[RMDB]
RNA sequence: GGGAACGACUCGAGUAGAGUCGAAAAACGCUGCUACUACGGUAGCAGCGAGUGAUGAUGAACGCCAUCGAUACUGAGAUAUGAUGACCGGAUUCCUGGCUGAUAGCACCGCGUACGCGCGGUGCAAUGUACCAAUUCGAUUCGUCGAAUUGGUACAAAAAGAAACAACAACAACAAC
Reactivity to 2A3 in 0.01 (KOAc 150mM, MgCl2 10mM, bicine 150mM(pH8.5), 24C), signal-to-noise 3, nucleotides 027 to 126: a000c000g000c000u000g010c000u010a000c010u020a020c260g160g000u000a000g000c000a000g000c000g000a000g000u090g050a110u050g000a010u020g080a100a030c020g040c050c000a020u020c000g060a050u050a160c040u170g150a030g040a270u130a070u140g100a060u070g040a080c010c070g000g050a100u030u050c020c010u050g140g000c090u050g060a090u100a080g000c010a010c000c000g000c000g020u020a050c240g000c000g000c020g070g010u010g010c000a000a020
Reactivity to DMS in 0.01 (KOAc 150mM, MgCl2 10mM, bicine 150mM(pH8.5), 24C), signal-to-noise 3, nucleotides 027 to 126: a150c020g000c010u010g000c000u000a000c000u000a110c250g030g010u010a010g000c000a000g010c000g030a010g030u020g010a110u020g000a130u010g010a170a110c260g000c030c020a020u000c020g000a100u010a030c090u010g010a080g010a130u000a060u010g000a080u000g010a080c030c010g010g000a110u000u010c000c030u000g030g010c060u000g000a080u000a080g020c010a010c000c000g040c020g000u000a160c260g010c030g000c010g010g010u020g000c010a000a000